[RMDB]
The record gives the reactivity of an RNA of 177 nucleotides to DMS.
RNA sequence: GGGAACGACUCGAGUAGAGUCGAAAAUGAAUUUCAUAAAAGUGGAAGUAUGCAAUAUGAGCUCUUAAGUGUCUGGCUGCUUCUUCUUAACCUAAUGACUGAGAUUCAUUCAGGUUGCUAUAUAUAACACAGGUGAGAAGUUCGCUUCUCACCUGUGAAAAGAAACAACAACAACAAC
Reactivity to DMS in 0.01 (KOAc 150mM, MgCl2 10mM, bicine 150mM(pH8.5), 24C), signal-to-noise 1, nucleotides 027 to 126: u000g000a010a020u000u010u010c000a010u000a150a050a080a040g020u010g010g000a010a000g030u000a000u020g030c010a020a110u030a070u000g000a300g030c040u000c280u010u040a080a120g010u000g030u000c000u000g000g010c020u000g010c020u010u000c000u000u010c020u000u000a090a050c190c160u000a050a070u010g030a130c300u000g000a040g000a030u000u000c000a010u000u010c120a130g010g010u000u000g030c030u010a100u020a070u000a060u020a060a150
It was measured as part of the RMDB library OK2TST.